Record summary: The record gives the reactivity of an RNA of 207 nucleotides to 2A3 and DMS. It was measured as part of the RMDB library RNAMAK. For DMS, 6,150 sequencing reads were counted. For 2A3 the reverse transcriptase was SuperScript II with manganese. For 2A3, 5,580 sequencing reads were counted. DMS adducts were read by reverse transcription with MarathonRT. The RNA was probed in 150 mM KOAc, 10 mM MgCl2 and 150 mM bicine (pH 8.5) at 24 C.

[RMDB]
RNA sequence: GGGAACGACUCGAGUAGAGUCGAAAACAAUACUAAGUUCGCUUAGUAUUGAAAAAAGCGUACUACCUAUAAUCUAUGAACUACUACCCGUCCCAAAUAGGACGGAGUAGCAUAGGUAGGUAUCGCAAAAACCUAGACGUGUUCGCACGUCUAGGAAGUUAAAGUUAUCCUUCGGGAUAACUUUAACAAAAGAAACAACAACAACAAC
Reactivity to 2A3 in 0.01 (KOAc 150mM, MgCl2 10mM, bicine 150mM(pH8.5), 24C), signal-to-noise 5, nucleotides 027 to 156: c010a010a000u010a000c000u000a000a000g010u030u070c080g050c110u000u000a000g000u000a000u000u010g000a130a000a000a000a000a000g020c030g030u090a080c020u000a010c010c000u030a030u050a190a160u120c010u040a030u030g040a150a130c020u050a020c000u050a090c130c000c000g010u030c030c020c030a180a300a190u260a100g000g000a000c000g000g000a010g000u000a000g000c000a000u000a000g010g000u010a000g000g020u020a030u300c020g000c000a070a030a020a040a010c000c000u000a000g000a000c000g010u010g010u050u050c140g020c120a000c000g000u000c000u000a000g000g000a020a000
Reactivity to DMS in 0.01 (KOAc 150mM, MgCl2 10mM, bicine 150mM(pH8.5), 24C), signal-to-noise 2, nucleotides 027 to 156: c010a000a050u000a000c000u000a010a000g030u000u020c300g020c000u010u000a010g020u000a010u050u010g010a000a080a100a100a090a180g010c000g020u000a000c030u000a010c020c000u000a040u000a200a170u000c120u000a160u010g020a140a190c030u000a030c000u000a030c030c000c010g000u000c000c000c030a030a160a200u000a050g010g000a040c000g010g000a060g020u000a000g010c010a020u000a030g010g010u010a010g000g010u010a030u000c040g040c020a040a050a090a100a090c000c000u000a000g010a020c000g030u000g000u000u000c300g030c020a010c000g040u000c000u000a000g010g000a000a030